[RMDB]
RNA sequence: GGGAACGACUCGAGUAGAGUCGAAAAGGCAUGGCGAGGCUUACCUCGGAGCCAAGCGGGAGGGCUCCCGGGGCGCUGCACGGGCGUAGUGCUGCGUGAGACUCUAUGCCCGUGACAUGUUACGGACAAAUUCCGUAACCGUGUGAGGCCUAAUUGAGUCUAAUCUAGAGUUCGCUCUAGAUUAGACAAAAGAAACAACAACAACAAC
Reactivity to DMS in 0.01 (KOAc 150mM, MgCl2 10mM, bicine 150mM(pH8.5), 24C), signal-to-noise 2, nucleotides 027 to 156: g000g000c030a100u000g030g030c030g020a130g030g000c040u000u000a070c030c010u020c110g040g000a070g030c010c010a070a140g020c070g010g010g040a190g030g000g020c020u000c030c010c010g020g010g050g020c020g040c050u010g050c000a020c010g010g000g020c040g010u010a060g020u000g030c050u000g010c100g060u010g010a290g010a080c020u000c010u000a040u010g010c040c010c000g020u000g020a020c030a020u030g020u000u010a040c010g000g000a100c050a120a080a300u010u000c000c000g000u000a000a010c000c080g070u020g010u000g010a100g000g000c000c020u010a160a150u000u000g000a300
Reactivity to 2A3 in 0.01 (KOAc 150mM, MgCl2 10mM, bicine 150mM(pH8.5), 24C), signal-to-noise 4, nucleotides 027 to 156: g040g000c050a040u090g040g030c050g040a050g050g010c030u050u150a110c010c010u000c000g010g000a000g000c000c010a030a030g110c080g020g050g010a040g000g010g010c000u060c050c030c000g020g010g000g000c030g000c030u040g000c000a000c010g000g010g000c010g010u010a010g010u020g020c090u070g030c060g080u170g020a050g030a030c000u000c010u010a010u010g000c000c000c000g000u010g010a040c010a030u110g000u010u010a000c000g020g010a020c110a150a240a140u260u020c010c000g000u000a010a000c010c030g020u010g010u040g090a060g080g000c000c010u070a090a100u070u140g060a050